Structure probing data (2A3 and DMS) for a 207-nucleotide construct.
For 2A3, 14,006 sequencing reads were counted.
Conditions: 150 mM KOAc, 10 mM MgCl2 and 150 mM bicine (pH 8.5), 24 C.
The data come from the RNA Mapping Database (RMDB), library RNAMAK.
The DMS profile rests on 3,973 reads.
High 2A3 reactivity points to a flexible backbone, as in loops and unpaired stretches.

RNA sequence: GGGAACGACUCGAGUAGAGUCGAAAAGGGGUCGAUUUCAAUGACGGUGACAGAGCGAAGAACAUACUGAAGCCUCCACGGUAUGGGAGCUCGUCACUAAGACAGAAAUCGACGGAGGCACCCAAAAUCAAUUGCUGUUGUUCGCAACAGCAAUUGAGAUUAGUCAAUUCUUCGGAAUUGACUAAUCAAAAGAAACAACAACAACAAC
Reactivity to 2A3 in 0.01 (KOAc 150mM, MgCl2 10mM, bicine 150mM(pH8.5), 24C), signal-to-noise 7, nucleotides 027 to 156: g030g010g060g040u010c010g010a010u020u010u010c170a300a300u210g040a050c030g000g010u020g000a080c150a300g010a050g000c020g080a270a000g000a020a000c000a000u010a000c010u040g040a150a020g010c000c000u000c000c000a000c000g000g000u000a000u000g000g000g000a000g000c000u000c000g000u000c000a000c000u000a040a020g070a040c070a030g000a000a000a000u000c000g000a010c020g000g000a000g000g000c000a020c010c010c000a060a050a000a060u040c000a000a000u000u000g000c000u000g010u020u000g020u060u070c250g020c140a000a010c000a010g020c000a000a000u000u000g000a000
Reactivity to DMS in 0.01 (KOAc 150mM, MgCl2 10mM, bicine 150mM(pH8.5), 24C), signal-to-noise 2, nucleotides 027 to 156: g000g030g000g010u000c010g000a020u000u010u000c000a280a110u000g020a020c030g000g020u000g000a030c040a140g030a000g020c010g010a100a160g000a140a230c010a030u000a030c020u000g010a030a150g000c010c000u000c010c020a300c020g000g000u000a100u010g000g020g010a100g010c000u000c000g000u000c010a000c010u000a010a100g000a170c020a100g010a000a020a030u000c000g020a020c020g010g010a020g060g060c030a140c020c020c000a030a070a090a250u000c020a020a020u000u000g000c000u000g040u010u000g000u000u000c200g000c030a030a060c010a000g000c000a000a000u010u010g010a040